[RMDB]
RNA sequence: GGGAACGACUCGAGUAGAGUCGAAAACGACGGGUCUUCGGACCCGUCGAAAUAAUGCGUAGCUCGCGCUACGCUGGCAUCGAGUAGGUCGAGCCACCUACAAAAGCUUCGAGUUCGCUCGAAGCAAGAGAUUGGAUUAGUUCGCUAAUCCAAUCUCAAAAGAAACAACAACAACAAC
Reactivity to DMS in 0.01 (KOAc 150mM, MgCl2 10mM, bicine 150mM(pH8.5), 24C), signal-to-noise 4, nucleotides 027 to 126: c010g010a010c010g020g010g020u000c000u000u010c200g010g010a020c000c000c000g010u000c000g000a010a040a080u000a100a060u010g000c000g010u000a000g000c000u000c300g010c300g000c000u000a000c010g010c000u000g010g010c080a120u000c030g000a060g010u000a070g000g000u000c020g010a100g000c030c060a070c000c000u000a040c080a100a080a130a110g000c000u000u010c000g000a010g000u000u010c160g020c000u000c000g010a010a010g020c000a020a050
Reactivity to 2A3 in 0.01 (KOAc 150mM, MgCl2 10mM, bicine 150mM(pH8.5), 24C), signal-to-noise 4, nucleotides 027 to 126: c010g000a000c010g020g010g010u010c020u040u100c260g140g010a010c010c000c010g010u000c000g000a000a000a000u100a010a040u110g000c000g000u000a000g010c020u030c140g100c030g010c040u000a000c000g000c000u010g010g010c020a190u090c060g020a040g050u110a050g090g250u050c020g020a020g040c020c020a010c010c000u040a030c040a000a120a010a030g000c010u010u000c000g010a010g020u040u110c160g050c050u000c000g000a000a000g000c000a000a010